[RMDB]
RNA sequence: GGGAACGACUCGAGUAGAGUCGAAAAGGCCGAUCUCGAUCCUGCAUUCGGCGGACACGAUCAUCCGCGCGUUCCUGCAGGCGGCCGCGCUGUCCGUCGUGUCGAUCACGGUGCUGCUGUGGAUCAAGGCGUGAUAUCGAUUCGUCGAUAUCACGCCAAAAGAAACAACAACAACAAC
Reactivity to DMS in 0.01 (KOAc 150mM, MgCl2 10mM, bicine 150mM(pH8.5), 24C), signal-to-noise 2, nucleotides 027 to 126: g010g010c030c020g010a070u000c110u000c140g020a050u000c020c010u000g010c060a190u000u000c000g020g000c010g000g010a010c030a060c110g020a040u000c160a270u010c020c010g030c000g040c030g000u000u000c020c060u000g030c130a060g000g030c060g000g010c300c080g010c030g000c080u010g010u000c100c100g000u000c030g010u000g010u000c060g060a130u000c040a100c040g010g020u000g040c070u000g000c070u000g020u010g010g010a110u000c040a090a130
Reactivity to 2A3 in 0.01 (KOAc 150mM, MgCl2 10mM, bicine 150mM(pH8.5), 24C), signal-to-noise 1, nucleotides 027 to 126: g040g000c020c000g030a080u040c090u050c080g050a070u030c010c010u040g040c010a060u090u060c050g020g030c100g000g030a050c080a010c080g080a080u080c000a070u040c000c020g020c010g010c020g020u020u030c010c000u000g030c010a030g080g000c000g000g000c000c020g000c000g000c010u000g040u010c030c020g010u000c010g040u030g060u030c050g060a050u030c030a010c100g040g050u070g050c040u090g010c000u090g000u130g080g000a040u030c040a080a070
Chemical mapping of a 177-nucleotide RNA with DMS and 2A3.
2A3 adducts were read by reverse transcription with SuperScript II with manganese.
Source: RMDB library OK2TST, as collected in RNAgym.